Record summary: The record gives the reactivity of an RNA of 177 nucleotides to DMS and 2A3. For 2A3, 1,946 sequencing reads were counted.
RNA sequence: GGGAACGACUCGAGUAGAGUCGAAAAGACCGCCCCGCGAGCAAGUACCACCUCGAGAUCACCCUCGACGACGGGCGGACCGUCCAAGCCAUCGUACUACUACCCGAUUAUCUAGCGCUCACUCGGGGACGUGAAAGGGAUUCGUCCCUUUCACGUCAAAAGAAACAACAACAACAAC
Reactivity to DMS in 0.01 (KOAc 150mM, MgCl2 10mM, bicine 150mM(pH8.5), 24C), signal-to-noise 3, nucleotides 027 to 126: g010a200c050c010g000c040c010c010c040g000c060g010a060g020c080a140a050g000u010a090c030c040a110c110c070u000c090g000a070g010a100u010c070a070c070c070c010u000c050g030a070c030g010a090c180g010g000g030c040g010g010a060c000c020g010u010c040c060a020a150g000c030c050a070u000c060g020u010a040c110u020a060c090u000a120c040c020c000g000a080u010u010a040u020c050u010a130g000c070g010c020u000c030a100c070u000c020g010g000g000
Reactivity to 2A3 in 0.01 (KOAc 150mM, MgCl2 10mM, bicine 150mM(pH8.5), 24C), signal-to-noise 2, nucleotides 027 to 126: g040a020c000c010g000c010c000c010c010g030c000g000a010g020c020a060a040g020u020a050c020c000a080c000c090u100c090g130a140g000a080u080c010a030c030c050c000u030c000g140a170c000g000a030c030g080g010g000c040g010g010a010c000c020g050u070c070c000a060a000g000c010c000a030u050c080g040u020a040c020u020a020c000u070a080c000c010c030g040a050u050u060a070u150c050u080a030g040c030g000c080u000c020a030c010u000c000g040g000g020

The data come from the RNA Mapping Database (RMDB), library OK2TST. For DMS, 1,875 sequencing reads were counted.